[RMDB]
RNA sequence: GGGAACGACUCGAGUAGAGUCGAAAACUUGCGCACCAGAGGGCGGUCAAUGCCCGGCGAGGAAAUCUCCAGAUGAUACUUGCCGCUGAUCGGGUCUUCGACAUCGAGAACAGGCGCGACCGUGCGACGUAUCCCUAGCGUUCGCGCUAGGGAUACGAAAAGAAACAACAACAACAAC
Reactivity to 2A3 in 0.01 (KOAc 150mM, MgCl2 10mM, bicine 150mM(pH8.5), 24C), signal-to-noise 2, nucleotides 027 to 126: c000u050u140g000c030g000c010a020c030c010a050g050a080g110g020g010c020g000g050u060c080a090a170u190g020c040c000c000g020g000c000g010a000g010g040a080a110a010u050c060u060c120c000a140g020a130u070g030a000u060a270c030u010u020g000c020c010g040c020u060g000a120u010c020g030g000g060u040c010u130u120c110g000a040c080a140u110c010g020a010g000a170a080c060a110g040g020c030g050c000g060a030c040c030g010u080g030c040g040a070
Reactivity to DMS in 0.01 (KOAc 150mM, MgCl2 10mM, bicine 150mM(pH8.5), 24C), signal-to-noise 2, nucleotides 027 to 126: c060u000u000g000c030g020c030a100c070c080a030g010a180g000g000g000c000g020g000u000c080a100a110u020g000c030c070c010g020g020c040g010a030g050g040a120a150a030u030c000u030c130c200a160g010a080u000g000a120u020a300c040u010u000g030c000c010g020c110u000g000a090u010c010g000g000g020u010c030u020u000c130g010a060c090a070u000c020g030a070g000a150a080c110a050g000g000c000g010c080g000a120c030c220g010u010g000c050g000a170